[RMDB]
This 207-nucleotide RNA was probed chemically with 2A3.
Conditions: 150 mM KOAc, 10 mM MgCl2 and 150 mM bicine (pH 8.5), 24 C.
Reactivities are given for positions 27 through 156.
RNA sequence: GGGAACGACUCGAGUAGAGUCGAAAACUUGACCAGCGACAAGCUCCCCAAACUCAACCGGGUCGGCCUGCCUGAACUCCAAAGGGACUGCACGUAUGCCCCUACACUCCUUGAUCUUGGAGCGCAACCCCGCAUAUCCAUGCAGCUUGACAACCAGCAUCCAGUCUUGGUUCGCCAAGACUGGAUGAAAAGAAACAACAACAACAAC
Reactivity to 2A3 in 0.01 (KOAc 150mM, MgCl2 10mM, bicine 150mM(pH8.5), 24C), signal-to-noise 1, nucleotides 027 to 156: c050u120u120g040a070c020c040a090g020c040g130a050c040a150a030g000c050u030c080c000c010c030a070a040a000c030u040c030a070a030c000c040g060g000g000u050c040g040g030c000c000u050g080c000c100u070g050a120a130c010u030c010c010a100a060a000g020g000g000a050c030u040g070c070a020c010g080u080a170u140g020c000c010c020c000u000a020c040a010c040u020c020c010u000u070g040a050u100c020u040u110g010g000a030g020c020g000c000a000a000c000c000c000c000g050c010a040u040a010u040c070c010a010u020g040c000a020g070c060u120u080g000a010c050a040a030c020c020a000g050